About this RNA:
This 177-nucleotide RNA was probed chemically with 2A3 and DMS. Values cover nucleotides 27 to 126. Values are in units of 0.01, from 0 to 300, in steps of 10. For DMS, 1,491 sequencing reads were counted.
RNA sequence: GGGAACGACUCGAGUAGAGUCGAAAAGACCGUCAGUUAGACGGAAGAAGUGCAUAAAUCCACAACGGAAGACGAGAUAAUGCACAAAUGUGGAUAAGCGUACGGAUCUACGUGCGCUAAACGUGAGCCUAGUACGCGCAUUCGUGCGCGUACUAGGAAAAGAAACAACAACAACAAC
Reactivity to 2A3 in 0.01 (KOAc 150mM, MgCl2 10mM, bicine 150mM(pH8.5), 24C), signal-to-noise 2, nucleotides 027 to 126: g140a010c020c020g000u000c010a000g060u100u150a050g000a000c030g060g020a000a010g070a080a000g000u000g140c050a000u020a000a160a000u000c000c000a050c000a130a300c120g210g000a040a190g060a170c220g000a000g000a230u180a240a000u190g000c000a000c060a070a060a000u300g080u190g030g030a000u040a070a000g000c000g010u000a000c000g090g040a030u060c010u160a050c030g000u000g000c000g030c000u000a010a010a010c040g060u030g060a000g000
Reactivity to DMS in 0.01 (KOAc 150mM, MgCl2 10mM, bicine 150mM(pH8.5), 24C), signal-to-noise 2, nucleotides 027 to 126: g000a130c010c000g010u000c000a110g030u090u010a070g000a040c000g010g000a270a160g000a090a090g000u000g000c000a030u000a010a090a120u010c000c060a070c000a020a300c070g000g020a120a150g000a110c210g000a170g000a110u030a290a060u020g000c000a020c000a040a000a090u030g000u090g040g000a040u000a230a060g010c020g030u000a000c000g000g000a110u150c130u020a080c010g010u000g000c120g040c030u000a000a040a110c110g000u020g000a030g000

2A3 adducts were read by reverse transcription with SuperScript II with manganese.